RNA sequence: GGGAACGACUCGAGUAGAGUCGAAAAGUAUUCUUGUUUUAUUAUUUAUUGGAUUGUAUGUUCUUAUUUUCUUCUAUUUCGCAGUUAAAGGCCAUAUUGUCCUUUUCUAAACUAUUUAGUCCAAAAACCCUACUGGUACUUUCGAGUACCAGUAGGGAAAAGAAACAACAACAACAAC
Reactivity to 2A3 in 0.01 (KOAc 150mM, MgCl2 10mM, bicine 150mM(pH8.5), 24C), signal-to-noise 1, nucleotides 027 to 126: g010u000a180u210u050c060u030u060g070u090u060u110u020a170u110u060a110u080u160u180a080u010u010g010g010a000u000u050g020u010a110u000g000u070u000c000u020u030a100u060u170u020u020c000u150u000c080u140a180u040u170u240c010g010c000a000g000u140u020a010a020a020g000g060c000c000a040u000a050u130u080g000u000c000c020u060u040u000u040c060u070a070a070a120c010u000a150u050u150u070a020g010u010c010c020a030a030a030a070a070